Description: This 177-nucleotide RNA was probed chemically with 2A3 and DMS. The reactions ran in a buffer of 150 mM KOAc, 10 mM MgCl2 and 150 mM bicine (pH 8.5), at 24 C. Values cover nucleotides 27 to 126. It was measured as part of the RMDB library OK2TRN.

RNA sequence: GGGAACGACUCGAGUAGAGUCGAAAAUUCGUACACUUGCUUGUUUGAUCAGAGAAUUUGUAUGCUGACAUCAAAUUAGCUGAGCAGAGAACAUCAAUCAUAACAGCGCUAGCAGCAGUUCAGUGCGACUAGACCAGGAGUUCGCUCCUGGUCUAGUAAAAGAAACAACAACAACAAC
Reactivity to 2A3 in 0.01 (KOAc 150mM, MgCl2 10mM, bicine 150mM(pH8.5), 24C), signal-to-noise 1, nucleotides 027 to 126: u020u000c000g010u090a030c020a000c020u050u130g060c030u080u140g040u050u020u090g030a050u020c010a010g050a010g020a270a120u030u050u160g080u070a030u070g060c070u040g080a070c010a030u100c010a010a030a080u040u020a020g000c060u050g000a010g000c040a020g010a010g030a120a020c000a080u070c000a030a130u100c070a040u080a110a030c030a000g040c040g000c080u060a000g060c010a000g040c030a010g000u050u080c010a020g040u030g080c030g000
Reactivity to DMS in 0.01 (KOAc 150mM, MgCl2 10mM, bicine 150mM(pH8.5), 24C), signal-to-noise 1, nucleotides 027 to 126: u000u000c070g030u000a120c080a120c140u000u010g000c050u000u000g010u000u030u000g000a020u000c020a030g010a020g000a030a070u000u010u000g020u000a060u000g040c140u010g000a130c080a060u000c020a000a000a060u010u000a000g040c000u000g000a040g000c110a060g000a160g000a040a040c050a010u000c080a000a050u000c060a080u010a080a080c070a100g040c040g010c060u000a100g010c050a040g010c040a030g000u020u000c090a050g000u000g000c060g000
The DMS profile rests on 960 reads.